Chemical mapping of a 170-nucleotide RNA with 2A3 and DMS. For DMS, 96,042 sequencing reads were counted. The 2A3 profile rests on 48,800 reads. The reactions ran in a buffer of 150 mM KOAc, 10 mM MgCl2 and 150 mM bicine (pH 8.5), at 24 C. DMS (dimethyl sulfate) methylates the pairing face of unpaired adenines and cytosines.
[RMDB]
RNA sequence: GGGAACGACUCGAGUAGAGUCGAAAAUGCAGCUAAGGGUUACAUUGCUGGAAUACAGAAUUUUAAGGAAACGCUGUAUUAUCAGAACAAUGUCUUUAUGUCUGAAGCUAAAUGCUGGGUGGAAACCGAACUUACUUCUUCGGAAGUAAGAAAAGAAACAACAACAACAAC
Reactivity to 2A3 in 0.01 (KOAc 150mM, MgCl2 10mM, bicine 150mM(pH8.5), 24C), signal-to-noise 9, nucleotides 027 to 129: u090g010c010a010g000c010u050a040a070g050g020g020u080u080a020c000a010u020u020g020c000u000g010g020a000a000u000a010c000a000g030a050a060u090u080u080u150a260a110g220g060a100a040a010c090g000c030u000g020u010a000u010u000a090u060c000a000g000a090a070c010a000a010u010g020u030c030u070u150u040a100u140g060u010c010u020g010a040a010g010c030u090a100a070a030u160g020c040u030g010g030g010u060g030g030a060a020a030c020c010g010a030a010
Reactivity to DMS in 0.01 (KOAc 150mM, MgCl2 10mM, bicine 150mM(pH8.5), 24C), signal-to-noise 9, nucleotides 027 to 129: u040g010c050a050g040c000u000a060a070g010g010g000u000u060a060c020a020u000u000g000c010u020g000g040a020a010u000a010c000a010g020a060a050u010u000u010u030a140a210g040g000a030a040a050c300g020c000u000g010u000a000u000u010a060u020c020a020g020a110a120c000a020a010u000g010u000c100u000u000u000a030u030g000u020c010u010g000a080a030g030c030u040a060a080a070u020g000c060u030g010g020g030u020g020g010a040a080a090c040c050g000a090a120